[RMDB]
RNA sequence: GGGAACGACUCGAGUAGAGUCGAAAAGACGCCUAAUGGCGAAAAUGUAAAAUCAACUACACACCAGAUAAAUACAAAUGCUAAAUCUCGCAACUAGUUGAUCUAGUCCAGCGGUGAGAUCCGCAGAGCUAGCUGGAGGGUUCGCCCUCCAGCUAGCAAAAGAAACAACAACAACAAC
Reactivity to 2A3 in 0.01 (KOAc 150mM, MgCl2 10mM, bicine 150mM(pH8.5), 24C), signal-to-noise 1, nucleotides 027 to 126: g050a020c050g000c070c000u250a230a110u300g000g000c020g110a140a070a000a000u220g020u080a020a020a020a020u080c000a070a030c060u150a000c000a000c020a000c030c000a050g000a060u110a020a290a000u080a000c170a000a210a000u050g050c000u190a090a020a010u020c030u000c120g000c060a000a300c050u030a000g000u100u030g060a110u000c000u000a000g000u000c000c010a000g000c000g080g000u020g000a000g000a000u130c000c000g070c000a000g000a000

Structure probing data (2A3) for a 177-nucleotide construct. The reactions ran in a buffer of 150 mM KOAc, 10 mM MgCl2 and 150 mM bicine (pH 8.5), at 24 C. The data come from the RNA Mapping Database (RMDB), library OK1LIB.